[RMDB]
RNA sequence: GGGAACGACUCGAGUAGAGUCGAAAAUUCGUCUAGAGGUUUCAAUGUGUCUAUACGAAUUGUACACUGGGCGGUACACCGCUCCCAGUUGGAUGUUAACACUUAGGUAGGGGACACUCCUCUGGGAGGUAUGGUAUAUGUUCGCAUAUACCAUACCAAAAGAAACAACAACAACAAC
Reactivity to 2A3 in 0.01 (KOAc 150mM, MgCl2 10mM, bicine 150mM(pH8.5), 24C), signal-to-noise 7, nucleotides 027 to 126: u020u010c010g000u000c010u010a010g010a060g090g080u120u210u300c110a110a100u190g040u020g040u060c010u040a060u010a050c010g060a060a030u020u040g030u040a020c040a010c040u050g030g080g000c070g010g020u100a050c110a060c080c010g010c050u050c000c010c000a060g020u140u060g040g010a040u070g030u140u100a140a030c070a030c090u070u090a070g170g030u060a040g040g240g000g000a000c010a010c040u010c000c000u010c000u000g000g010g010a030
Reactivity to DMS in 0.01 (KOAc 150mM, MgCl2 10mM, bicine 150mM(pH8.5), 24C), signal-to-noise 9, nucleotides 027 to 126: u000u000c020g010u000c020u000a010g020a040g010g010u000u010u010c200a120a100u010g020u010g010u000c030u000a080u000a020c010g010a030a040u000u000g010u000a080c070a050c030u010g000g010g010c070g010g010u010a100c210a120c040c020g010c110u000c020c000c010a010g000u000u000g020g010a090u000g000u000u000a090a100c050a040c090u000u000a100g020g000u010a070g010g010g010g000a040c030a010c110u000c000c000u000c010u000g000g000g000a060